The data come from the RNA Mapping Database (RMDB), library OK2TRN. Chemical mapping of a 177-nucleotide RNA with 2A3 and DMS. The reactions ran in a buffer of 150 mM KOAc, 10 mM MgCl2 and 150 mM bicine (pH 8.5), at 24 C. The DMS profile rests on 6,574 reads. For 2A3, 2,739 sequencing reads were counted.
[RMDB]
RNA sequence: GGGAACGACUCGAGUAGAGUCGAAAAUGGAGGUAUAAUCCAGUGUCAGUCUGCAGUGGUGGGCCUGCCCUGGCCGUCUCCAAAGAUGGGUGCUCUUCGGAACUGGCAGCCCCCUGCAUGCUGUCUAAAGUCUUGGAAAUUUCGAUUUCCAAGACUUAAAAGAAACAACAACAACAAC
Reactivity to 2A3 in 0.01 (KOAc 150mM, MgCl2 10mM, bicine 150mM(pH8.5), 24C), signal-to-noise 3, nucleotides 027 to 126: u050g030g000a050g020g120u300a190u070a300a100u030c030c010a040g060u060g020u130c000a000g010u000c000u000g000c000a010g000u120g240g100u140g060g070g000c030c040u010g010c010c020c020u070g130g050c000c000g020u000c010u000c030c010a140a100a020g070a060u130g000g030g050u080g050c060u040c020u130u060c060g080g000a110a100c030u040g000g000c000a000g000c010c000c000c000c010u000g000c000a000u020g000c000u010g010u020c000u010a080
Reactivity to DMS in 0.01 (KOAc 150mM, MgCl2 10mM, bicine 150mM(pH8.5), 24C), signal-to-noise 5, nucleotides 027 to 126: u000g000g000a040g010g030u000a110u010a090a160u000c010c010a080g010u010g010u010c000a020g010u000c140u000g010c020a010g020u020g030g020u010g020g010g010c190c040u000g000c000c030c170u000g010g010c040c030g010u000c050u010c120c200a050a080a080g000a040u000g010g010g020u010g010c080u000c030u000u000c120g010g000a050a070c070u000g020g010c010a030g000c010c000c010c000c000u000g010c010a010u000g000c010u010g000u000c020u010a080